RNA sequence: GGGAACGACUCGAGUAGAGUCGAAAAGAAUGAUAAUGGCUAUGAUAUCAGCAAUUAUUUAGAAAUCAAUGAAGCCUUUGGAACGAUGGAUGAUUUUGAAAAGUUAAUCAAAGUUGCUCAUCAAAAAUAUGUGUUACGGAUUCGUCCGUAACACAUAAAAAGAAACAACAACAACAAC
Reactivity to DMS in 0.01 (KOAc 150mM, MgCl2 10mM, bicine 150mM(pH8.5), 24C), signal-to-noise 3, nucleotides 027 to 126: g000a140a140u000g000a030u000a020a000u010g000g020c000u000a060u050g010a100u050a040u030c200a060g050c040a070a080u010u000a050u030u010u000a080g010a090a080a040u030c080a040a090u020g000a080a060g000c010c020u000u000u050g010g000a110a090c140g000a010u000g010g000a030u010g000a040u000u000u020u030g000a010a030a060a150g020u030u050a100a100u000c030a020a030a030g010u000u000g010c080u000c020a010u000c000a030a010a090a050a190
Reactivity to 2A3 in 0.01 (KOAc 150mM, MgCl2 10mM, bicine 150mM(pH8.5), 24C), signal-to-noise 3, nucleotides 027 to 126: g010a000a110u170g030a030u050a060a040u060g020g000c010u000a010u190g070a130u110a060u230c070a020g020c040a040a070u080u050a070u030u150u120a130g090a010a100a030u120c090a040a050u140g080a120a030g040c030c000u060u070u150g160g010a100a040c070g020a010u000g040g000a060u030g000a000u010u010u010u000g040a030a000a020a150g200u190u160a020a000u030c000a020a000a000g020u000u020g000c000u000c000a000u000c010a000a000a000a080a060